[RMDB]
RNA sequence: GGGAACGACUCGAGUAGAGUCGAAAAUUUAACCGCAUUGAUGUGGAUAAGGUGAACGAAAUGGUUGCUUCUUCUAAAGAAGAUAUGGCGGCAGCUGUCGCGGUAACCGGCCCGUUAGCCGAUGACCCAUGACUUCGGUCUUCGGACCGAAGUCAUGAAAAGAAACAACAACAACAAC
Reactivity to 2A3 in 0.01 (KOAc 150mM, MgCl2 10mM, bicine 150mM(pH8.5), 24C), signal-to-noise 1, nucleotides 027 to 126: u050u050u030a060a110c020c010g000c020a030u150u300g110a250u170g140u010g010g000a020u040a150a060g000g050u040g030a030a010c000g000a010a020a000u200g000g000u000u000g030c010u030u000c000u000u000c080u230a300a150a080g020a030a000g020a010u070a220u270g030g000c020g010g000c010a080g080c100u200g010u030c000g000c010g000g000u010a010a000c000c000g000g000c000c010c010g010u000u020a010g000c000c030g060a050u100g050a060c000c000
Reactivity to DMS in 0.01 (KOAc 150mM, MgCl2 10mM, bicine 150mM(pH8.5), 24C), signal-to-noise 2, nucleotides 027 to 126: u010u000u010a130a110c010c000g020c050a150u010u020g050a100u010g010u000g020g000a140u000a050a140g000g010u000g010a050a050c040g020a000a030a300u030g010g000u000u000g000c000u000u000c000u000u000c030u000a180a070a120g050a020a010g000a020u000a050u010g070g020c010g010g030c000a150g020c190u000g020u000c000g020c010g000g000u010a010a020c030c000g010g000c300c040c000g000u000u000a260g010c010c010g000a120u010g000a140c000c030